[RMDB]
RNA sequence: GGGAACGACUCGAGUAGAGUCGAAAAGGGAUUUAAAAGGAAUCCUAGCAUAUUCAACAAUCAGUCAACUAGGAAUGAUUAUGGCAAUGGUCGGUAUCGGUGGUGGAUAUGCUCAACACCAACAAGACAAUUGAUAAGGCUUCGGCCUUAUCAAUUGAAAAGAAACAACAACAACAAC
Reactivity to DMS in 0.01 (KOAc 150mM, MgCl2 10mM, bicine 150mM(pH8.5), 24C), signal-to-noise 5, nucleotides 027 to 126: g010g020g000a000u000u000u000a080a100a130a120g000g020a040a010u000c000c000u000a050g000c030a040u000a040u010u000c030a070a070c060a060a040u020c050a100g010u010c090a110a090c140u020a090g000g010a090a040u010g010a060u020u010a070u050g000g030c080a080a050u020g010g010u000c030g010g010u030a040u030c070g000g010u000g000g020u000g020g000a030u000a020u010g000c000u000c170a050a050c110a120c030c010a080a070c230a050a110g000a160
Reactivity to 2A3 in 0.01 (KOAc 150mM, MgCl2 10mM, bicine 150mM(pH8.5), 24C), signal-to-noise 9, nucleotides 027 to 126: g030g000g000a020u070u040u110a190a210a050a030g180g010a040a000u000c000c010u010a020g020c000a020u020a030u060u060c020a040a050c010a070a120u100c010a020g150u050c020a050a070c130u100a060g060g130a100a080u100g070a040u080u130a070u230g080g000c070a090a090u130g070g020u050c040g050g050u100a070u120c040g030g030u050g010g030u010g000g000a010u010a010u060g000c010u020c020a010a030c020a020c020c010a030a070c050a050a040g170a040
An RNA of 177 nucleotides, treated with DMS and 2A3 and read out base by base. DMS adducts were read by reverse transcription with MarathonRT. The DMS profile rests on 10,141 reads. For 2A3 the reverse transcriptase was SuperScript II with manganese. Reactivities are given for positions 27 through 126.